[RMDB]
RNA sequence: GGGAACGACUCGAGUAGAGUCGAAAACGUUUGUGCGGGCCCGGGAUCUGACCUGUCGGGCGCCCGGUUGCGACCGCCCGGCCACCCAGUGCGACCUGGAUCACACCAUCGCGUUCGCCGACGGUGGACAGCAGCGAAGAUUCGUCUUCGCUGCUGUAAAAGAAACAACAACAACAAC
Reactivity to DMS in 0.01 (KOAc 150mM, MgCl2 10mM, bicine 150mM(pH8.5), 24C), signal-to-noise 2, nucleotides 027 to 126: c050g000u050u000u030g010u030g020c060g010g010g000c050c010c000g080g050g000a160u060c000u010g020a110c060c070u020g040u020c120g000g000g010c060g000c050c040c030g000g010u060u050g010c110g000a110c050c010g000c000c060c040g010g000c020c070a000c010c000c110a120g030u000g000c000g010a060c090c000u030g000g000a160u000c300a160c150a150c050c020a010u020c190g020c170g000u010u030c080g010c000c000g000a190c100g000g000u020g000g000
Reactivity to 2A3 in 0.01 (KOAc 150mM, MgCl2 10mM, bicine 150mM(pH8.5), 24C), signal-to-noise 2, nucleotides 027 to 126: c060g040u060u130u070g090u150g040c030g000g010g060c000c000c000g010g020g000a080u000c070u070g130a230c000c010u270g090u130c060g020g010g030c020g000c000c000c000g110g000u170u190g000c080g130a090c000c010g000c000c000c000g020g010c020c010a040c000c000c030a070g030u080g160c020g000a070c000c000u010g070g000a100u160c020a030c000a020c100c000a060u090c080g020c030g220u230u140c020g040c060c010g000a060c040g030g000u000g020g000